[RMDB]
RNA sequence: GGGAACGACUCGAGUAGAGUCGAAAACAGGACGUUAGCAUAGGUCCAUUUUACUAUGCAGAUUGCAUCGUCGGAGACGACGUAGAGACCGCCACAGCAGGGUCGAUGACCUGCUGAAUUACACCUCUUCUCAUAGCGAGGGAUCAAGCUAUGUACAAUAAUGGGCUAAUUUCGAUUAGCCCAUUAUAAAAGAAACAACAACAACAAC
Reactivity to DMS in 0.01 (KOAc 150mM, MgCl2 10mM, bicine 150mM(pH8.5), 24C), signal-to-noise 4, nucleotides 027 to 156: c050a120g000g010a060c030g020u000u000a120g020c010a050u000a060g020g000u000c030c040a130u000u000u000u000a110c030u000a000u000g000c050a220g010a120u010u000g020c040a180u000c030g030u000c030g020g010a300g000a290c030g020a010c040g030u000a130g000a130g020a100c040c000g020c030c080a220c010a010g000c000a000g010g020g030u000c050g010a150u010g020a130c010c000u000g020c010u000g000a020a090u000u000a080c080a100c020c000u000c000u000u000c040u000c010a050u010a030g040c050g020a120g000g010g000a080u000c030a030a150g000c020u000a010u000g020u000a050c140a090
Reactivity to 2A3 in 0.01 (KOAc 150mM, MgCl2 10mM, bicine 150mM(pH8.5), 24C), signal-to-noise 3, nucleotides 027 to 156: c050a010g030g060a010c070g030u110u210a050g000c020a030u030a070g010g060u030c020c000a030u050u050u000u010a080c010u000a010u030g010c030a040g050a180u110u300g020c070a080u060c020g010u000c010g070g010a060g000a050c030g000a000c020g010u050a050g010a000g010a030c020c030g040c050c030a020c000a010g000c000a000g000g060g060u160c130g090a140u200g060a060c000c000u000g000c010u020g010a010a040u140u020a050c040a050c020c030u030c040u070u020c030u020c020a000u030a000g020c010g020a050g000g050g030a040u060c070a060a000g000c000u010a010u040g020u020a060c050a040
Structure probing data (DMS and 2A3) for a 207-nucleotide construct. High 2A3 reactivity points to a flexible backbone, as in loops and unpaired stretches. For 2A3, 2,115 sequencing reads were counted. For DMS the reverse transcriptase was MarathonRT. It was measured as part of the RMDB library OK3TST. The reactions ran in a buffer of 150 mM KOAc, 10 mM MgCl2 and 150 mM bicine (pH 8.5), at 24 C.